Chemical mapping of a 177-nucleotide RNA with 2A3. As a SHAPE reagent, 2A3 marks flexible, mostly unpaired nucleotides at the ribose 2'-OH. The data come from the RNA Mapping Database (RMDB), library OK1LIB. The reactions ran in a buffer of 150 mM KOAc, 10 mM MgCl2 and 150 mM bicine (pH 8.5), at 24 C.
RNA sequence: GGGAACGACUCGAGUAGAGUCGAAAACAUGAGGGUUCAUAAUAAAAGGAUUUUAUAUCGAUGACUAUGUUUAUUACUAAUGGUAGCUUCGUUACAGUAUAUCCUUAUCUUGUAUGUGCUACGUUAAGGACCAUACGGUCUUCGGACCGUAUGGUCCAAAAGAAACAACAACAACAAC
Reactivity to 2A3 in 0.01 (KOAc 150mM, MgCl2 10mM, bicine 150mM(pH8.5), 24C), signal-to-noise 1, nucleotides 027 to 126: c040a100u300g000a190g000g000g090u130u130c040a030u110a170a010u140a060a000a000a000g100g000a040u100u000u000u000a130u070a000u000c040g000a060u000g160a300c000u000a000u080g010u070u110u000a170u300u000a000c300u040a000a180u110g130g000u020a000g000c040u000u000c000g000u010u070a010c020a150g060u120a000u020a020u160c000c000u000u000a060u280c110u060u000g000u110a070u110g020u020g000c000u000a060c050g010u050u100a010a020